[RMDB]
RNA sequence: GGGAACGACUCGAGUAGAGUCGAAAAAGAAAUAAUAAAGAGUUUACAACUAUAUUGAACUAAGUGAACUAUAUUGAGCAAAUAGUUUGCAUUUGCUAAAGAUAAAUUAAGAGCAGCGUGAUAUUCCCUCCACCGAUAUGUUCGCAUAUCGGUGGAGAAAAGAAACAACAACAACAAC
Reactivity to 2A3 in 0.01 (KOAc 150mM, MgCl2 10mM, bicine 150mM(pH8.5), 24C), signal-to-noise 2, nucleotides 027 to 126: a000g010a030a070a030u290a010a010u180a120a120a020g090a010g070u030u120u150a000c040a120a010c010u150a040u000a070u290u190g040a120a000c090u300a300a260g000u000g020a000a000c000u010a010u030a030u220u080g010a000g000c000a030a030a030u120a010g060u070u120u070g070c070a030u110u050u050g020c070u070a070a070a000g090a100u190a070a240a190u300u100a060a040g050a100g030c040a000g000c030g050u020g110a100u000a000u120u000c000c000
Conditions: 150 mM KOAc, 10 mM MgCl2 and 150 mM bicine (pH 8.5), 24 C. An RNA of 177 nucleotides, treated with 2A3 and read out base by base. Values cover nucleotides 27 to 126. 2A3 adducts were read by reverse transcription with SuperScript II with manganese. For 2A3, 420 sequencing reads were counted.